This 177-nucleotide RNA was probed chemically with DMS and 2A3. For 2A3 the reverse transcriptase was SuperScript II with manganese. The 2A3 profile rests on 1,718 reads. For DMS the reverse transcriptase was MarathonRT. The RNA was probed in 150 mM KOAc, 10 mM MgCl2 and 150 mM bicine (pH 8.5) at 24 C.
[RMDB]
RNA sequence: GGGAACGACUCGAGUAGAGUCGAAAACGGGGGCCGCCUCUUUGGCCCCCUGCGCGCCUCGGGCCCGCUGCGCCGCAUGGCGGCCUGGAUGCGCCAGAUCCCCGACCCCGAGGACGUGCGCGUGGUGUCUCAGGUAGCUUUUCGAAGCUACCUGAGAAAAAGAAACAACAACAACAAC
Reactivity to DMS in 0.01 (KOAc 150mM, MgCl2 10mM, bicine 150mM(pH8.5), 24C), signal-to-noise 1, nucleotides 027 to 126: c190g000g020g000g000g060c030c020g030c180c040u030c140u000u030u020g010g050c050c000c000c000c000u000g010c040g000c030g050c000c000u010c000g050g000g030c090c040c050g000c050u000g000c060g000c000c000g010c050a110u030g010g040c000g000g010c020c070u010g000g000a130u010g000c070g040c000c040a050g020a140u000c010c020c030c050g030a060c200c030c000c000g000a020g000g000a090c000g050u040g040c050g000c130g030u000g000g030u000g000
Reactivity to 2A3 in 0.01 (KOAc 150mM, MgCl2 10mM, bicine 150mM(pH8.5), 24C), signal-to-noise 2, nucleotides 027 to 126: c040g000g010g000g000g000c010c000g050c050c030u160c020u060u080u090g000g000c020c010c010c000c010u000g010c010g000c000g000c000c020u040c000g010g000g010c030c050c020g030c050u070g000c040g000c010c060g000c120a170u100g120g010c000g010g010c010c000u030g060g010a060u070g030c020g040c000c000a000g000a110u070c020c000c000c000g040a110c020c000c000c000g020a020g020g040a110c030g060u090g000c010g000c030g020u100g020g050u070g030